Record summary
The record gives the reactivity of an RNA of 177 nucleotides to DMS and 2A3. The reactions ran in a buffer of 150 mM KOAc, 10 mM MgCl2 and 150 mM bicine (pH 8.5), at 24 C. Reactivities are given for positions 27 through 126.
RNA sequence: GGGAACGACUCGAGUAGAGUCGAAAACAUCCGGAGAUGACUCGGAGCACGACGAUAUGGACAACAAUGACUGAUUACGGAAUGCAAACGGCGAUGCAAUGUGCCUUGUCACUCAUGUACGUCAAUGAUAUGCGGAAUGUUUCGACAUUCCGCAUAUAAAAGAAACAACAACAACAAC
Reactivity to DMS in 0.01 (KOAc 150mM, MgCl2 10mM, bicine 150mM(pH8.5), 24C), signal-to-noise 4, nucleotides 027 to 126: c090a120u040c010c040g050g010a050g010a130u020g000a070c060u010c050g000g010a080g010c040a040c160g000a050c070g020a070u000a070u020g010g010a060c050a100a050c100a080a070u000g000a110c090u010g000a070u010u010a060c140g000g000a060a060u000g000c040a040a050a080c110g010g000c040g010a090u000g000c030a070a060u030g020u000g000c050c040u020u030g020u020c050a040c100u030c030a030u010g020u040a050c130g010u010c020a130a090u010g000
Reactivity to 2A3 in 0.01 (KOAc 150mM, MgCl2 10mM, bicine 150mM(pH8.5), 24C), signal-to-noise 3, nucleotides 027 to 126: c040a050u020c000c010g040g050a110g010a090u170g040a070c030u020c060g010g010a050g030c050a030c080g050a020c030g000a020u010a050u230g050g010a020c020a160a010c020a030a160u130g070a050c040u030g040a090u130u100a050c050g030g030a100a020u050g020c030a050a090a010c030g030g000c020g040a040u050g010c020a050a040u120g020u020g050c040c000u030u020g050u050c000a010c020u040c020a050u060g030u060a050c060g010u000c010a010a090u120g070

Overview
For DMS the reverse transcriptase was MarathonRT. It was measured as part of the RMDB library OK1LIB. For 2A3, 4,011 sequencing reads were counted. 2A3 adducts were read by reverse transcription with SuperScript II with manganese.